[RMDB]
RNA sequence: GGGAACGACUCGAGUAGAGUCGAAAAACGCAUGCAUACGUGCAUGCGAAUUAGGGUAAUGACCUAUGAUUUGACAGACUGUGCUUUCUAUGUCUGCCUGUCAUUUCUGUAGGCCAAUACUCUGUAACUGUACUCGCAUUUUCGAAUGCGAGUACAGAAAAGAAACAACAACAACAAC
Reactivity to DMS in 0.01 (KOAc 150mM, MgCl2 10mM, bicine 150mM(pH8.5), 24C), signal-to-noise 2, nucleotides 027 to 126: a230c030g000c010a000u010g000c000a050u010a100c140g010u000g000c000a000u010g000c000g000a010a020u010u020a010g020g000g000u000a010a060u000g040a060c000c000u000a000u000g030a000u000u000u000g000a010c000a000g050a030c000u000g030u040g010c030u030u100u020c200u010a120u020g020u000c020u000g010c080c020u020g010u010c000a000u000u030u000c010u010g020u000a000g020g000c000c010a020a080u000a010c010u000c000u000g010u050a090a150
Reactivity to 2A3 in 0.01 (KOAc 150mM, MgCl2 10mM, bicine 150mM(pH8.5), 24C), signal-to-noise 5, nucleotides 027 to 126: a000c030g000c000a000u010g010c000a010u010a050c230g080u020g010c000a000u010g000c010g000a010a020u110u070a020g000g010g000u010a020a050u030g000a010c000c000u000a010u020g000a010u000u000u010g000a000c000a010g010a030c010u030g060u170g240c020u210u290u130c150u240a120u260g030u000c010u010g010c020c000u000g000u000c000a000u000u000u000c040u050g030u010a000g000g010c000c000a030a010u020a000c000u000c010u020g060u050a110a080
This 177-nucleotide RNA was probed chemically with DMS and 2A3.
The RNA was probed in 150 mM KOAc, 10 mM MgCl2 and 150 mM bicine (pH 8.5) at 24 C.
Values are in units of 0.01, from 0 to 300, in steps of 10.
For DMS the reverse transcriptase was MarathonRT.